About this RNA: Structure probing data (DMS and 2A3) for a 207-nucleotide construct. The reactions ran in a buffer of 150 mM KOAc, 10 mM MgCl2 and 150 mM bicine (pH 8.5), at 24 C. It was measured as part of the RMDB library OK3TST.
[RMDB]
RNA sequence: GGGAACGACUCGAGUAGAGUCGAAAAAUGCGAGAAACAAACGCUUUAUUUUCCAGUGAUGACAGAAGAAACAAAGAAAUUUGAUACUCUCAGCCUGACUCCUUCCCUUGAUCCACCAUCAGCUAUAGGAGUCCAAAGAAAAUGAACUAUGAACCAACAUAAUCUAGCCUUUCGAGGCUAGAUUAUGAAAAGAAACAACAACAACAAC
Reactivity to DMS in 0.01 (KOAc 150mM, MgCl2 10mM, bicine 150mM(pH8.5), 24C), signal-to-noise 2, nucleotides 027 to 156: a070u010g020c020g030a240g000a200a100a250c070a100a060a140c080g000c060u000u000u010a100u020u000u010u000c020c020a180g010u040g020a120u000g010a130c060a060g020a110a100g020a170a110a160c070a040a030a070g020a110a060a150u000u010u020g000a100u000a090c060u000c060u000c020a090g020c030c020u020g000a030c010u000c030c000u000u010c050c020c010u010u010g020a050u010c020c140a110c170c090a180u000c030a080g000c010u000a110u000a080g040g000a050g010u010c020c080a090a110a080g010a010a040a020a040u000g000a030a090c020u000a060u010g000a050a090c010c010a040a210
Reactivity to 2A3 in 0.01 (KOAc 150mM, MgCl2 10mM, bicine 150mM(pH8.5), 24C), signal-to-noise 4, nucleotides 027 to 156: a000u130g000c030g000a070g140a050a230a040c080a060a130a040c040g020c000u060u090u070a090u050u120u040u000c050c010a040g050u040g160a100u100g020a020c070a070g040a050a020g020a020a160a010c040a040a100a010g030a100a110a020u070u070u090g060a080u110a130c010u010c000u010c040a020g000c010c020u040g000a010c000u010c030c000u020u060c000c000c000u010u090g020a030u070c040c030a060c030c010a080u070c020a020g040c020u030a020u100a180g010g010a020g020u000c000c000a050a070a000g040a020a070a020a040u120g030a030a020c160u130a110u240g060a000a020c160c000a000a040